The data come from the RNA Mapping Database (RMDB), library OK3TST. This 207-nucleotide RNA was probed chemically with 2A3 and DMS. The 2A3 profile rests on 3,202 reads. Conditions: 150 mM KOAc, 10 mM MgCl2 and 150 mM bicine (pH 8.5), 24 C.

[RMDB]
RNA sequence: GGGAACGACUCGAGUAGAGUCGAAAACGGCGCAGCGCAGUCGCCUGGAGGAGAAGUUCUUGGAGGAGAACAUCUUGCUGCUAAGAAAGCAAUUGGUAGGUCGUGCCCGAAGGUGGAGCACGGCUGUUCCUGCCCAGGGGCUGGAGGUCGGGCAGGACCCCAGUAUUUAGUUCGCUAAAUACUGGGGAAAAGAAACAACAACAACAAC
Reactivity to 2A3 in 0.01 (KOAc 150mM, MgCl2 10mM, bicine 150mM(pH8.5), 24C), signal-to-noise 4, nucleotides 027 to 156: c070g010g000c030g000c030a070g020c080g020c130a040g130u150c020g030c030c020u030g030g020a030g030g040a050g000a060a050g050u090u030c040u130u080g030g040a050g040g030a050g010a030a030c010a070u050c040u040u050g020c020u010g030c050u110a110a030g070a110a080a020g090c020a030a110u120u090g070g020u080a070g000g000u020c000g010u000g010c000c000c000g060a090a100g100g120u300g020g020a120g020c000a000c000g000g000c000u000g010u030u030c000c000u000g000c010c000c000a060g050g010g020g000c050u030g030g040a040g000g040u070c020g000g000g000c010a020g010g000a010
Reactivity to DMS in 0.01 (KOAc 150mM, MgCl2 10mM, bicine 150mM(pH8.5), 24C), signal-to-noise 1, nucleotides 027 to 156: c050g010g010c020g090c030a180g050c060g030c000a180g040u010c020g010c040c000u010g030g020a120g020g000a070g010a120a110g000u000u000c060u000u010g010g000a200g000g010a150g010a070a000c050a070u000c000u000u000g030c030u000g000c000u010a170a110g000a090a090a090g000c070a050a100u000u000g010g010u010a170g010g010u000c010g010u000g020c010c000c000g040a070a130g010g020u010g000g010a070g040c010a020c020g010g040c010u010g000u000u000c000c000u000g030c000c000c040a150g040g000g020g040c080u030g000g000a060g010g000u000c070g000g000g030c010a030g020g000a110